RNA sequence: GGGAACGACUCGAGUAGAGUCGAAAACUUAUGCUGGGUAAUGCGACCAGACCCAACACCCGGUCGGGAAACUCCUUUGUUCCUGUUGGGACUACCCAGUUUACUGGAUUAAAGGCCGUAGUACAACCGAAUACAGCUAUUUCGAUAGCUGUAUUCGAAAAGAAACAACAACAACAAC
Reactivity to 2A3 in 0.01 (KOAc 150mM, MgCl2 10mM, bicine 150mM(pH8.5), 24C), signal-to-noise 4, nucleotides 027 to 126: c030u120u130a050u190g000c000u020g040g000g000u090a160a100u200g130c030g110a090c020c010a010g030a040c030c010c010a020a010c020a050c000c060c040g040g120u080c000g050g000g030a070a100a090c060u200c080c050u200u160u230g030u060u000c000c010u010g010u000u030g010g010g000a010c020u010a030c000c000c010a020g010u020u020u020a050c030u040g100g000a140u180u190a170a100a100g060g000c030c030g060u100a080g080u090a070c060a070a020c130
Reactivity to DMS in 0.01 (KOAc 150mM, MgCl2 10mM, bicine 150mM(pH8.5), 24C), signal-to-noise 4, nucleotides 027 to 126: c090u000u020a060u000g000c020u000g000g000g010u000a040a100u010g020c080g000a060c040c030a060g000a220c010c010c010a030a030c030a190c100c060c030g000g010u010c110g000g000g000a050a090a090c160u010c120c060u010u000u000g010u000u000c010c020u000g020u000u000g000g000g010a140c060u000a050c020c000c010a020g020u010u000u010a060c060u000g000g000a150u010u010a060a110a110g000g010c030c020g020u000a070g020u010a070c120a090a070c200